RNA sequence: GGGAACGACUCGAGUAGAGUCGAAAAGAAAGACCCACAUGAUGUUAAACCCAAAGUGAAAGGGAGUGCGCAUCUGGCAACAGUUGGCGCACGCAUGACCAAUAACUAAUCUUCUCGCUGAUGGAAAGUCUUAUAGUAUAUUCGUAUACUAUAAGACAAAAGAAACAACAACAACAAC
Reactivity to DMS in 0.01 (KOAc 150mM, MgCl2 10mM, bicine 150mM(pH8.5), 24C), signal-to-noise 9, nucleotides 027 to 126: g010a100a100a110g010a160c020c010c010a120c180a080u020g010a080u000g020u010u010a040a100a140c100c030c010a030a170a080g010u000g020a070a060a070g000g010g010a130g010u000g010c000g020c010a020u000c000u000g010g000c300a120a140c010a010g010u000u000g020g020c000g010c020a000c010g010c100a050u010g000a090c110c080a060a060u020a070a080c070u010a050a080u020c030u000u000c050u010c030g020c030u000g000a140u010g010g010a070a060a100
Reactivity to 2A3 in 0.01 (KOAc 150mM, MgCl2 10mM, bicine 150mM(pH8.5), 24C), signal-to-noise 9, nucleotides 027 to 126: g100a010a090a000g090a030c010c100c000a030c010a060u190g030a040u060g050u150u180a100a080a070c020c000c020a060a060a040g080u080g080a100a060a060g040g010g030a060g000u010g000c000g000c000a020u030c010u000g020g000c040a080a040c000a100g020u070u100g160g000c000g000c000a000c000g000c010a020u110g070a070c020c040a070a090u120a110a040c040u070a060a060u040c030u090u010c030u020c040g040c040u060g030a120u120g050g060a080a070a030
Notes:
An RNA of 177 nucleotides, treated with DMS and 2A3 and read out base by base. Reactivities are rounded to 0.1 and cut off at 0 and 3. The data come from the RNA Mapping Database (RMDB), libraries RFM100 and RFMREP.